[RMDB]
RNA sequence: GGGAACGACUCGAGUAGAGUCGAAAACAGAACUAGAUGGGCCGUGUGCUUAACCAGGACAAGAUCUCCUUCUCUCCAACGUUGUUGCCAACUCAUGAUUCUCCUAACCUGUGCUUGGAGAGACGUGCUACCAUAUAGGUGUUCGCACCUAUAUGAAUCUCUUACAUAAGUUCGCUUAUGUAAGAGAAAAAGAAACAACAACAACAAC
Reactivity to 2A3 in 0.01 (KOAc 150mM, MgCl2 10mM, bicine 150mM(pH8.5), 24C), signal-to-noise 2, nucleotides 027 to 156: c060a020g100a080a030c040u090a030g020a200u060g020g070g000c060c070g120u110g030u070g100c020u070u070a060a020c040c020a040g000g020a010c040a090a080g050a120u030c040u040c050c000u080u000c020u000c010u010c030c020a070a040c110g010u020u000g000u010u010g000c060c030a040a020c060u010c060a060u070g030a220u110u020c050u050c020c010u060a060a100c020c060u090g050u140g110c070u040u030g000g010a020g010a000g000a030c020g040u040g030c050u070a120c040c020a010u010a000u000a030g000g010u010g010u080u050c130g030c060a000c000c010u010a000u000a000u010g000a000a040
Reactivity to DMS in 0.01 (KOAc 150mM, MgCl2 10mM, bicine 150mM(pH8.5), 24C), signal-to-noise 2, nucleotides 027 to 156: c060a110g020a060a120c030u000a060g000a090u010g020g010g050c020c010g030u010g070u000g020c070u010u000a060a090c060c020a100g010g020a100c040a090a110g010a090u000c030u000c020c010u000u000c010u010c010u000c000c020a020a170c120g030u010u000g000u020u000g010c000c030a080a100c040u000c020a080u010g000a120u010u000c000u000c010c040u000a060a050c050c070u000g030u000g000c060u000u000g000g000a090g000a050g020a050c060g010u000g020c050u000a150c130c010a010u000a010u000a020g020g040u010g040u000u000c300g010c000a020c000c000u020a010u000a000u010g000a070a100